[RMDB]
RNA sequence: GGGAACGACUCGAGUAGAGUCGAAAAACAAAGGCGGCCCGAACAAAGGCGAACCACACGAGGCGUCUAUCGGUGGCUACAUUGACCCUGACUCGUUGGACACUGACGGCAAGGCGUUGUUCGGGGACAUCAUUCUUGACCGAAACACCGACGCCGGGGCGUCGUUCCAAUUCGUUGGAACGACGCCAAAAGAAACAACAACAACAAC
Reactivity to 2A3 in 0.01 (KOAc 150mM, MgCl2 10mM, bicine 150mM(pH8.5), 24C), signal-to-noise 1, nucleotides 027 to 156: a010c060a040a050a020g070g000c070g020g050c010c010c070g000a040a050c090a040a100a010g000g010c000g090a080a020c000c000a040c050a060c120g020a010g020g060c000g000u020c060u090a140u000c020g050g000u000g030g030c030u100a050c060a060u000u200g060a140c010c010c000u000g070a080c060u010c050g020u040u050g050g010a040c050a070c220u090g080a020c090g030g000c010a020a010g020g020c030g020u000u020g000u050u050c000g000g000g030g010a000c000a020u180c020a010u140u140c060u170u130g030a090c030c040g010a070a000a030c030a000c030c000g120a010c000g000c040c000g180g010